RNA sequence: GGGAACGACUCGAGUAGAGUCGAAAAGAAGUAUCUCAAAUUCAAUCAAGAUUGACGGAUGUUAAAUGUGCUAAUGUUGUGUUGCUUAAUUGCCUCCAGCACUUGCAUAUUGCAUCUAAUUCUAAGUUGUGGCAGUAUUGUAGUACUUUGCACAAUGCAUUGUGCAAGUCUUCGGACUUGCACAAUGAAAAGAAACAACAACAACAAC
Reactivity to 2A3 in 0.01 (KOAc 150mM, MgCl2 10mM, bicine 150mM(pH8.5), 24C), signal-to-noise 4, nucleotides 027 to 156: g140a050a000g060u100a140u060c040u010c050a080a150a080u300u120c080a020a130u070c070a080a050g080a200u080u120g050a070c110g020g000a000u010g010u080u130a080a010a010u030g000u010g000c010u030a030a040u020g010u010u020g070u020g000u210u010g030c020u060u080a120a130u300u050g000c010c010u000c000c000a000g000c000a000c000u020u020g000c000a010u010a000u010u010g000c000a000u030c000u050a020a050u130u070c030u060a190a050g020u020u010g010u010g050g060c030a010g030u050a010u060u170g140u080a160g010u000a060c050u080u140u160g080c010a010c000a020a040u110g020
Reactivity to DMS in 0.01 (KOAc 150mM, MgCl2 10mM, bicine 150mM(pH8.5), 24C), signal-to-noise 2, nucleotides 027 to 156: g010a130a080g040u000a050u000c030u000c030a080a100a140u010u010c070a060a070u000c060a100a100g020a170u010u010g000a170c240g020g020a000u020g010u010u000a080a040a030u010g050u000g000c000u020a020a030u000g050u000u000g010u010g000u010u000g010c030u000u010a080a200u000u000g020c010c000u000c040c020a070g020c050a030c020u000u020g020c010a010u000a030u010u000g010c020a030u000c020u000a070a080u000u010c050u000a080a240g040u000u000g000u010g010g010c070a080g030u010a030u010u000g040u000a130g020u000a040c050u000u000u000g020c060a040c070a040a120u000g000
The record gives the reactivity of an RNA of 207 nucleotides to 2A3 and DMS. For 2A3, 1,835 sequencing reads were counted. It was measured as part of the RMDB library OK3TST. The DMS profile rests on 4,204 reads.